[RMDB]
RNA sequence: GGGAACGACUCGAGUAGAGUCGAAAAAGGAUAAUGGCUUUUCACUUAGGUUGUGACAUAAAGGGCCUUAGAAAUUGUUAAUGAGUUACUUAAUGUUAAAACUUAGUCACCCAGAGGCCGGGCGCGGCUUGUCGAUUUAUUUCGAUAAAUCGACAAGAAAAGAAACAACAACAACAAC
Reactivity to 2A3 in 0.01 (KOAc 150mM, MgCl2 10mM, bicine 150mM(pH8.5), 24C), signal-to-noise 1, nucleotides 027 to 126: a000g170g010a100u170a160a030u220g090g030c040u030u070u080u080c050a050c060u060u050a000g030g020u070u060g080u040g030a000c000a010u060a030a080a050g030g000g000c000c000u000u020a050g070a050a240a060u200u190g020u040u030a030a060u040g050a040g150u050u030a130c010u000u090a030a060u090g010u020u070a090a120a000a000c000u000u010a020g010u040c010a060c030c010c050a010g060a020g000g000c100c090g060g000g050c050g020c010g040g070
Reactivity to DMS in 0.01 (KOAc 150mM, MgCl2 10mM, bicine 150mM(pH8.5), 24C), signal-to-noise 4, nucleotides 027 to 126: a080g010g000a110u010a070a110u010g010g010c030u000u000u010u000c080a050c060u010u000a070g020g000u000u000g010u000g010a030c060a030u010a040a050a050g010g010g010c130c010u000u000a040g010a100a090a130u010u010g010u000u010a060a100u010g010a130g010u000u000a040c030u010u000a140a050u010g010u000u010a050a050a030a030c030u000u000a040g010u000c070a080c020c010c020a150g010a090g010g010c020c040g030g020g030c080g010c090g010g000

Record summary: An RNA of 177 nucleotides, treated with 2A3 and DMS and read out base by base. 2A3 is a SHAPE reagent: it acylates the 2'-hydroxyl of flexible nucleotides of all four kinds. The reactions ran in a buffer of 150 mM KOAc, 10 mM MgCl2 and 150 mM bicine (pH 8.5), at 24 C. The data come from the RNA Mapping Database (RMDB), library OK2TST. For DMS, 3,711 sequencing reads were counted.